Chemical mapping of a 207-nucleotide RNA with DMS and 2A3. For 2A3, 1,919 sequencing reads were counted. For DMS the reverse transcriptase was MarathonRT. The DMS profile rests on 4,834 reads. It was measured as part of the RMDB library OK3TST.

[RMDB]
RNA sequence: GGGAACGACUCGAGUAGAGUCGAAAAUUAAUAUGGAAAAUGCCUUAGAUGAUAGGAUACAAAGUUACUCUCAUGGUAUGCGUCAAAAAAUAAUAAUUAUGGGAGUUUUAAUACAUGAUCCAGAGGUAUGGAUAUUAGAUGAGCCUAUGACUGGACACAUUAAUCCGAUAUUCGUAUCGGAUUAAUGAAAAGAAACAACAACAACAAC
Reactivity to DMS in 0.01 (KOAc 150mM, MgCl2 10mM, bicine 150mM(pH8.5), 24C), signal-to-noise 3, nucleotides 027 to 156: u020u000a050a110u010a140u000g000g000a100a070a100a080u010g010c000c010u010u000a070g020a120u020g010a180u000a060g020g030a140u000a150c070a080a140a160g020u000u010a050c000u010c000u000c010a040u000g010g030u000a020u000g020c090g000u030c020a000a050a150a110a120a080u000a050a090u010a080a060u000u010a040u000g000g000g000a030g020u000u000u000u000a060a120u010a080c050a080u000g020a070u000c020c000a130g010a060g020g030u000a050u010g010g000a060u010a080u000u000a070g020a110u010g000a120g000c020c010u010a070u010g010a080c060u000g040g010a090c080a130
Reactivity to 2A3 in 0.01 (KOAc 150mM, MgCl2 10mM, bicine 150mM(pH8.5), 24C), signal-to-noise 3, nucleotides 027 to 156: u050u040a020a010u060a090u220g020g060a090a080a030a040u060g010c010c010u070u080a080g020a120u090g020a050u100a160g070g000a060u070a130c070a040a190a010g030u040u010a020c000u000c000u000c020a000u040g030g040u060a040u130g030c010g070u060c040a000a080a100a180a100a020u120a040a060u130a060a060u100u040a010u030g000g030g010a000g010u000u090u120u110a060a040u060a020c040a020u070g020a050u020c000c000a000g000a010g050g010u040a050u100g030g000a040u040a050u160u110a030g130a150u060g040a010g030c010c010u040a050u050g010a000c020u030g020g020a010c040a000